RNA sequence: GGGAACGACUCGAGUAGAGUCGAAAAGUUGAGGACGAAGUGCUGGACUGGCUUCAGCAACGGCUGGAUGGCCGCGAAGAGUCCAACCGACACUCCUGAUACAGGAGCCGGGUGGCCAGGCGUGCACGAAAACAUGUACAUUCGUGUACAUGUUUUCAAAAGAAACAACAACAACAAC
Reactivity to DMS in 0.01 (KOAc 150mM, MgCl2 10mM, bicine 150mM(pH8.5), 24C), signal-to-noise 9, nucleotides 027 to 126: g010u010u000g010a110g010g010a100c110g010a110a110g010u000g010c010u000g010g010a050c020u000g000g000c060u000u000c030a080g010c140a130a100c050g000g000c020u000g010g020a100u030g000g000c010c020g000c060g010a110a110g000a140g000u030c030c040a040a060c020c010g010a100c190a230c010u000c000c000u000g000a210u030a110c090a010g000g000a020g020c170c040g000g000g000u010g010g010c000c020a030g010g000c020g010u010g010c040a040c070
Reactivity to 2A3 in 0.01 (KOAc 150mM, MgCl2 10mM, bicine 150mM(pH8.5), 24C), signal-to-noise 9, nucleotides 027 to 126: g070u060u070g040a060g060g050a030c060g070a170a030g030u030g050c020u070g020g080a080c010u030g060g050c010u030u020c020a010g010c030a070a080c050g060g000c010u050g070g120a150u200g100g000c010c000g010c030g040a080a050g030a020g050u030c020c000a010a010c010c000g030a020c020a020c070u030c000c010u070g080a220u160a250c090a020g000g000a000g020c070c010g030g000g010u030g020g000c010c000a010g010g010c030g040u080g000c020a010c090

About this RNA: This 177-nucleotide RNA was probed chemically with DMS and 2A3. DMS (dimethyl sulfate) methylates the pairing face of unpaired adenines and cytosines. Values cover nucleotides 27 to 126. The RNA was probed in 150 mM KOAc, 10 mM MgCl2 and 150 mM bicine (pH 8.5) at 24 C. 2A3 adducts were read by reverse transcription with SuperScript II with manganese.